[RMDB]
RNA sequence: GGGAACGACUCGAGUAGAGUCGAAAAAUCUUCGGCAUUCACCCGCAGGGUACAGAGCGUUAAUGCCAGCAGUAAGGCAACAGGCGCGACAUUUCUCAUAGAUUAUCCCUUACAAAAUACGGCAGCGUAUGUGCGUGAAUUUCGAUUCACGCACAUAAAAAGAAACAACAACAACAAC
Reactivity to DMS in 0.01 (KOAc 150mM, MgCl2 10mM, bicine 150mM(pH8.5), 24C), signal-to-noise 3, nucleotides 027 to 126: a080u010c010u000u000c090g000g010c040a100u030u000c120a040c070c040c020g020c070a070g000g000g000u000a050c160a080g020a170g020c000g000u010u000a070a080u010g000c030c000a150g060c100a110g010u020a110a090g010g000c060a040a050c200a190g010g000c020g000c010g000a100c160a050u020u010u000c040u010c040a060u030a080g030a090u020u010a060u010c010c000c010u010u000a090c190a030a080a050a050u020a060c050g020g000c070a040g000c070g040
Reactivity to 2A3 in 0.01 (KOAc 150mM, MgCl2 10mM, bicine 150mM(pH8.5), 24C), signal-to-noise 4, nucleotides 027 to 126: a010u070c030u060u000c020g040g000c020a070u070u070c060a080c020c030c000g050c060a110g020g050g020u060a040c030a030g070a010g010c020g000u040u130a080a010u100g000c000c000a010g010c000a020g100u240a210a060g020g000c020a010a000c050a120g030g030c010g030c010g010a020c000a060u060u070u000c030u000c010a050u080a060g070a040u010u110a060u060c000c000c010u040u000a140c120a070a130a010a000u160a020c030g000g020c020a030g010c010g020